[RMDB]
RNA sequence: GGGAACGACUCGAGUAGAGUCGAAAAGCGAUGCGGGUGGUCGCGGUGUACACGCUGGUGUGGAUGGUCGUCGCGUUGCGCAGGCUGCGCAGCGCGGGCGCCGCGCUGGCGGCGCGGGCCGUCGCCACGAUCAUAAUGGCUUCGGCCAUUAUGAUCGAAAAGAAACAACAACAACAAC
Reactivity to DMS in 0.01 (KOAc 150mM, MgCl2 10mM, bicine 150mM(pH8.5), 24C), signal-to-noise 1, nucleotides 027 to 126: g020c060g010a090u000g020c080g010g010g020u010g040g020u010c100g000c040g000g000u000g020u010a080c140a100c040g010c050u000g000g020u000g010u000g010g010a040u000g020g020u000c030g000u010c000g040c010g000u000u000g000c020g030c000a150g000g020c200u000g030c000g020c020a010g000c010g050c010g020g010g010c010g020c000c000g020c040g020c110u000g000g010c000g000g020c010g010c030g010g000g010c020c020g000u000c100g010c020c040a110
Reactivity to 2A3 in 0.01 (KOAc 150mM, MgCl2 10mM, bicine 150mM(pH8.5), 24C), signal-to-noise 1, nucleotides 027 to 126: g050c040g030a030u120g060c040g040g120g040u070g030g040u100c100g050c070g300g000u130g040u030a080c170a010c060g010c000u030g000g050u040g030u080g050g130a100u050g140g070u050c050g060u070c000g050c010g030u010u010g000c030g000c030a030g300g190c130u160g000c060g000c040a000g000c000g000c000g000g000g000c030g000c000c010g000c040g000c040u050g030g010c030g000g000c010g030c050g000g020g010c030c000g010u010c010g010c000c000a050